Structure probing data (2A3) for a 177-nucleotide construct. The RNA was probed in 150 mM KOAc, 10 mM MgCl2 and 150 mM bicine (pH 8.5) at 24 C. The 2A3 profile rests on 757 reads.
RNA sequence: GGGAACGACUCGAGUAGAGUCGAAAACAAAACUGACCAACUAUGAGGUCAUACAUCGUCAUAGAAAAACAAAACAAAACUGACCAGGUAUGAGGUCAUACAUCGUCAUAACAAACAAAACAACAAACCACCUCAGCUAGUUCGCUAGCUGAGGUGGAAAAGAAACAACAACAACAAC
Reactivity to 2A3 in 0.01 (KOAc 150mM, MgCl2 10mM, bicine 150mM(pH8.5), 24C), signal-to-noise 1, nucleotides 027 to 126: c090a000a000a070a000c150u060g060a000c040c040a000a140c000u000a000u060g020a000g000g000u090c040a000u070a000c100a100u220c060g200u030c020a020u090a080g240a070a130a040a000a000c140a120a090a020a000c100a040a220a000a000c040u000g000a000c000c030a020g180g030u030a000u090g040a010g000g120u060c000a000u100a000c030a000u130c060g030u030c010a070u000a190a080c050a140a160a000c100a020a000a050a000c150a000a000c000a000a070a000